Chemical mapping of a 177-nucleotide RNA with DMS and 2A3. The reactions ran in a buffer of 150 mM KOAc, 10 mM MgCl2 and 150 mM bicine (pH 8.5), at 24 C. 2A3 adducts were read by reverse transcription with SuperScript II with manganese.
RNA sequence: GGGAACGACUCGAGUAGAGUCGAAAAGAUAUGGACGAUCGUAUGGAGCCUCGUGUCGGAAACGACACCGGGCUGCGAAGUACAUCGUCCUAAGUCAAAUCCGGUAAGGCUUCGGCCUUACCGGAAACAUUCAAGCGUAGUUCGCUACGCUUGAAUGAAAAGAAACAACAACAACAAC
Reactivity to DMS in 0.01 (KOAc 150mM, MgCl2 10mM, bicine 150mM(pH8.5), 24C), signal-to-noise 4, nucleotides 027 to 126: g000a020u000a190u020g000g000a000c000g010a020u000c300g050u000a010u000g010g030a070g030c000c010u010c300g020u000g010u000c000g000g000a030a080a100c000g010a000c010a010c000c120g010g000g020c020u010g030c200g000a100a250g000u000a010c020a020u000c010g020u010c000c000u000a010a050g000u000c020a090a130a240u000c000c000g020g010u000a000a000g010g020c000u000u010c280g030g010c000c000u000u000a000c000c000g000g010a000a020a070
Reactivity to 2A3 in 0.01 (KOAc 150mM, MgCl2 10mM, bicine 150mM(pH8.5), 24C), signal-to-noise 2, nucleotides 027 to 126: g010a010u020a010u100g010g000a010c010g010a010u070c300g000u010a030u040g210g230a050g000c000c000u010c010g000u000g010u000c000g000g010a030a020a020c010g000a000c000a000c000c000g020g030g000c010u010g040c050g070a040a010g000u000a010c000a010u000c000g000u000c000c000u010a010a000g010u010c030a080a000a230u000c000c000g010g000u010a010a000g000g000c030u090u300c300g130g020c000c000u000u000a000c000c010g000g000a000a000a000